[RMDB]
RNA sequence: GGGAACGACUCGAGUAGAGUCGAAAAGAUAGAGAUAUUACAUACUUCAGUUUUCAAAGUGUAUGUGAAGUUCUGAAAGCACUUGUGAGUCUGAUUUUAAACCAAACUGUGAUGUAUUAUCAGAAUGAUAAUACAUCAUUUAGAGCUGUUCAUAUACACUAUUCCCUACGUUCGCGUAGGGAAUAGUAAAAGAAACAACAACAACAAC
Reactivity to DMS in 0.01 (KOAc 150mM, MgCl2 10mM, bicine 150mM(pH8.5), 24C), signal-to-noise 1, nucleotides 027 to 156: g000a130u000a130g020a120g000a100u010a040u010u000a040c000a030u000a030c030u010u000c000a070g010u000u010u000u000c010a100a060a120g040u000g020u010a060u010g000u000g010a020a080g010u000u000c050u010g010a100a050a110g010c010a030c070u010u020g020u010g000a050g020u010c000u000g000a110u000u000u000u030a050a100a160c060c010a030a060a080c200u000g000u000g010a070u000g030u000a000u000u000a000u020c000a160g030a100a170u000g020a010u000a010a010u000a010c000a000u010c010a000u000u000u000a060g010a130g030c000u000g000u000u000c030a020u020a010u000a120c190
Reactivity to 2A3 in 0.01 (KOAc 150mM, MgCl2 10mM, bicine 150mM(pH8.5), 24C), signal-to-noise 4, nucleotides 027 to 156: g040a030u200a040g090a010g020a010u060a130u190u160a100c040a070u120a090c010u050u070c030a070g030u060u040u080u100c080a150a130a070g020u060g010u070a030u080g070u030g050a050a060g030u070u020c030u050g050a110a040a010g010c020a060c080u080u090g060u020g130a040g020u030c020u030g020a060u030u010u060u220a080a080a060c060c030a060a030a070c050u040g000u000g030a000u010g010u000a000u010u010a000u000c020a010g300a300a180u290g000a030u000a000a000u000a000c000a000u000c000a000u000u010u030a010g000a010g030c030u020g040u110u010c030a030u030a010u020a150c020
The data come from the RNA Mapping Database (RMDB), library OK3TST. An RNA of 207 nucleotides, treated with DMS and 2A3 and read out base by base. The RNA was probed in 150 mM KOAc, 10 mM MgCl2 and 150 mM bicine (pH 8.5) at 24 C.